[RMDB]
The record gives the reactivity of an RNA of 207 nucleotides to 2A3. 2A3 adducts were read by reverse transcription with SuperScript II with manganese. The 2A3 profile rests on 1,040 reads. Source: RMDB library M2RFPK, as collected in RNAgym. The reactions ran in a buffer of 150 mM KOAc, 10 mM MgCl2 and 150 mM bicine (pH 8.5), at 24 C.
RNA sequence: GGGAACGACUCGAGUAGAGUCGAAAAAGCCAUACCAUUACGAUGGUAUGGCAAGUCCGUGACGGCGCUGGAUCCCGCCUGGCCGAUGCCGAACUGCCGAUCUGGCUGAUGGUUCCUGCCCCGUCAAAAAACGUAAAGCACUUCGGUGCUUUACGAAUCUUGUUGAGUACUUCGGUACUCAACAAGAAAAAGAAACAACAACAACAAC
Reactivity to 2A3 in 0.01 (KOAc 150mM, MgCl2 10mM, bicine 150mM(pH8.5), 24C), signal-to-noise 1, nucleotides 027 to 156: a000g020c010c000a000u000a000c000c000a000u060u000a050c250g100a050u000g000g000u000a000u000g000g020c000a010a000g020u010c000c010g030u020g000a000c020g000g000c010g000c040u030g000g000a020u040c000c010c010g010c010c050u040g010g020c000c030g010a030u130g090c020c070g160a180a170c100u150g040c050c010g110a110u040c080u100g060g010c040u060g010a220u120g050g000u020u010c000c000u020g030c070c060c010c000g000u000c000a020a020a020a010a020a020c000g000u000a000a000a000g000c000a000c010u050u140c250g050g000u010g000c000u000u000u000a000c000g000a020a040